Structure probing data (DMS and 2A3) for a 177-nucleotide construct.
[RMDB]
RNA sequence: GGGAACGACUCGAGUAGAGUCGAAAAUGAAAGUAGUCUCCUGCAGCGUCUGGGGUUUCCGUUGCAGACCUCGGAACCAGGACCUCGGCGUGGCCUAGCGAGUUAUGGCGACGAAGGCCGUGAAAAAGUAAAUACUAGAGUUCGCUCUAGUAUUUACAAAAGAAACAACAACAACAAC
Reactivity to DMS in 0.01 (KOAc 150mM, MgCl2 10mM, bicine 150mM(pH8.5), 24C), signal-to-noise 8, nucleotides 027 to 126: u000g000a100a100a120g010u010a070g010u000c070u000c010c010u000g020c130a150g020c160g010u000c010u000g010g000g000g010u000u000u000c070c210g000u010u010g010c130a050g000a030c020c010u000c010g010g000a040a030c040c020a040g000g010a040c190c010u000c030g010g010c050g010u010g000g010c000c010u000a180g000c060g000a110g000u000u010a080u010g000g010c020g000a100c060g000a130a080g010g010c010c010g010u000g000a040a070a080a080a100
Reactivity to 2A3 in 0.01 (KOAc 150mM, MgCl2 10mM, bicine 150mM(pH8.5), 24C), signal-to-noise 3, nucleotides 027 to 126: u140g030a040a070a040g090u130a020g040u040c010u010c040c010u030g040c070a070g030c030g070u000c010u050g000g000g020g000u010u030u010c060c070g110u110u200g010c040a020g020a040c010c010u000c000g020g000a010a020c020c000a010g000g020a000c010c000u030c030g040g030c030g030u030g010g000c010c000u020a040g040c020g020a030g030u140u140a160u210g090g000c000g000a090c030g030a090a040g050g000c010c040g020u080g030a090a090a000a020a000

The data come from the RNA Mapping Database (RMDB), library M2PK90.
The reactions ran in a buffer of 150 mM KOAc, 10 mM MgCl2 and 150 mM bicine (pH 8.5), at 24 C.
For DMS, 11,067 sequencing reads were counted.
Reactivities are given for positions 27 through 126.